[RMDB]
Structure probing data (2A3 and DMS) for a 177-nucleotide construct. The reactions ran in a buffer of 150 mM KOAc, 10 mM MgCl2 and 150 mM bicine (pH 8.5), at 24 C. The 2A3 profile rests on 1,179 reads. The data come from the RNA Mapping Database (RMDB), library OK2TST.
RNA sequence: GGGAACGACUCGAGUAGAGUCGAAAAGCUGCGCCUUAUCCGGUAACUAUCGUCUUGAGUCCAACCCGGUAAGACACGACUUAUCGCCACUGGCAGCAGCCACUGGUAACAGGAUUAGCAGAGCGAGGUUAUUCACCCACUUCGGUGGGUGAAUAACAAAAGAAACAACAACAACAAC
Reactivity to 2A3 in 0.01 (KOAc 150mM, MgCl2 10mM, bicine 150mM(pH8.5), 24C), signal-to-noise 2, nucleotides 027 to 126: g030c010u100g000c020g030c030c000u060u060a060u040c060c010g060g030u040a070a040c080u090a070u160c060g190u060c110u050u170g050a030g050u020c060c020a030a080c090c000c000g030g000u060a010a000g020a020c020a030c090g100a000c040u040u070a040u080c010g060c040c010a050c070u000g040g000c020a120g010c020a010g000c080c000a040c020u020g030g030u120a140a070c080a090g120g060a160u130u130a030g020c010a010g010a000g130c030g100a050g120
Reactivity to DMS in 0.01 (KOAc 150mM, MgCl2 10mM, bicine 150mM(pH8.5), 24C), signal-to-noise 2, nucleotides 027 to 126: g000c000u000g020c090g040c020c010u000u010a020u040c070c030g020g000u000a070a070c080u000a130u010c090g000u000c080u030u020g020a120g000u010c020c040a080a220c140c050c070g020g020u010a000a020g020a090c110a080c070g000a060c060u000u000a100u000c070g020c030c020a030c180u000g010g000c040a090g030c120a070g020c030c030a010c080u000g010g000u000a040a090c140a060g000g060a120u000u000a120g000c000a040g000a090g010c080g000a120g010